[RMDB]
RNA sequence: GGGAACGACUCGAGUAGAGUCGAAAAGAAAAGGGUGCUCGUCCUGGCACAUUUCCUAUCCUGGAAUAUUAGUGCAGACGCAUUGCACUGUUUGGCCCAUCCGUACGCCGCUUCUCCCCUCUCCUCACAAUGCGAUCUGAUUCGUCAGAUCGCAUUGAAAAGAAACAACAACAACAAC
Reactivity to DMS in 0.01 (KOAc 150mM, MgCl2 10mM, bicine 150mM(pH8.5), 24C), signal-to-noise 5, nucleotides 027 to 126: g000a040a050a060a060g010g030g030u000g010c010u010c010g010u010c040c110u010g010g010c020a010c020a110u000u000u010c010c000u010a130u050c180c120u000g010g000a050a030u020a050u010u010a060g030u000g010c000a100g010a060c050g000c300a060u030u020g000c000a010c010u000g010u000u000u010g020g010c050c010c010a060u020c050c030g020u010a070c100g020c050c030g000c050u000u000c030u000c000c020c000c030u000c030u000c020c010u010c130a200
Reactivity to 2A3 in 0.01 (KOAc 150mM, MgCl2 10mM, bicine 150mM(pH8.5), 24C), signal-to-noise 7, nucleotides 027 to 126: g090a000a060a010a010g110g010g010u020g010c020u010c020g040u040c030c040u060g090g000c000a010c000a020u020u010u030c000c000u040a160u150c040c080u050g020g030a050a030u140a090u220u160a080g010u010g000c000a010g020a060c050g020c100a080u050u150g000c010a000c020u020g160u030u070u080g060g010c000c000c010a020u020c020c020g030u030a020c050g010c000c010g010c030u060u010c020u050c010c000c000c000u010c000u000c000c000u020c000a050